[RMDB]
RNA sequence: GGGAACGACUCGAGUAGAGUCGAAAACUCGAGGACGGAGGCGACCAUGUCGCUCACCGGUCGGCCUGUCCCGUCUUCCGUGUGGCUCACGUGAUCCUUCAGUGUCUCGAAGUAGGUCUUCACGAAGAUUGGCGCAAUUUUUCGAAAUUGCGCCAAUAAAAGAAACAACAACAACAAC
Reactivity to DMS in 0.01 (KOAc 150mM, MgCl2 10mM, bicine 150mM(pH8.5), 24C), signal-to-noise 1, nucleotides 027 to 126: c020u000c060g010a070g030g010a060c030g010g010a180g000g010c010g010a040c000c090a140u000g020u000c090g030c060u010c020a050c110c080g030g010u000c020g020g020c000c000u000g010u000c170c000c010g020u000c010u000u010c060c050g030u000g020u000g000g020c040u020c060a160c020g010u020g000a060u000c030c010u000u000c020a090g000u010g020u000c040u000c070g000a070a060g000u010a040g040g020u000c050u000u000c010a060c090g020a080a050g030
Reactivity to 2A3 in 0.01 (KOAc 150mM, MgCl2 10mM, bicine 150mM(pH8.5), 24C), signal-to-noise 1, nucleotides 027 to 126: c010u040c010g010a020g030g020a040c000g050g000a000g040g000c030g010a000c020c020a050u190g070u050c060g000c140u060c030a040c070c030g040g000u020c000g140g080c000c000u080g020u090c010c020c030g010u030c000u050u000c060c040g060u090g040u050g080g000c040u000c080a040c040g040u020g010a080u030c020c050u100u120c090a090g000u030g070u190c010u040c090g040a110a000g000u090a040g010g090u000c010u060u110c070a060c100g040a040a000g020
Record summary: This 177-nucleotide RNA was probed chemically with DMS and 2A3. The RNA was probed in 150 mM KOAc, 10 mM MgCl2 and 150 mM bicine (pH 8.5) at 24 C. Reactivities are given for positions 27 through 126. The DMS profile rests on 1,306 reads.